Structure probing data (2A3 and DMS) for a 177-nucleotide construct. Reactivities are rounded to 0.1 and cut off at 0 and 3. The RNA was probed in 150 mM KOAc, 10 mM MgCl2 and 150 mM bicine (pH 8.5) at 24 C. For DMS the reverse transcriptase was MarathonRT.
RNA sequence: GGGAACGACUCGAGUAGAGUCGAAAAAGAAAAAAGUGAACAGAGAAUGAGAAUUGGCCAGUAAUUCUUUGGUAUCAAAAACUGUCUAUUAGCAAACAGUUGACAACAUGAUUGGACUAAUAGCCGCGCCAAUUAGUAGAUUCGUCUACUAAUUGGCAAAAGAAACAACAACAACAAC
Reactivity to 2A3 in 0.01 (KOAc 150mM, MgCl2 10mM, bicine 150mM(pH8.5), 24C), signal-to-noise 1, nucleotides 027 to 126: a040g050a080a030a000a010a000a030g100u040g040a040a010c020a010g050a000g050a060a030u070g000a020g050a110a130u110u070g040g020c000c030a020g000u020a020a040u030u000c000u000u020u040g050g060u160a070u110c060a010a040a100a000a080c050u030g020u020c000u020a060u050u030a030g000c030a080a120a000c000a030g020u040u040g130a110c080a100a050c020a110u180g000a110u040u140g010g000a020c010u010a010a080u000a120g000c030c010g100c020
Reactivity to DMS in 0.01 (KOAc 150mM, MgCl2 10mM, bicine 150mM(pH8.5), 24C), signal-to-noise 3, nucleotides 027 to 126: a110g040a030a090a060a060a070a130g030u020g010a050a080c040a040g000a130g010a040a020u000g000a180g030a070a090u000u010g010g010c070c050a090g000u000a050a030u000u010c010u000u000u000g020g010u000a060u000c050a000a050a070a060a080c090u000g020u010c020u010a050u010u010a030g000c080a060a030a140c060a010g010u000u010g020a100c130a060a050c130a080u000g000a050u000u000g000g010a140c040u000a010a030u000a040g010c070c130g020c280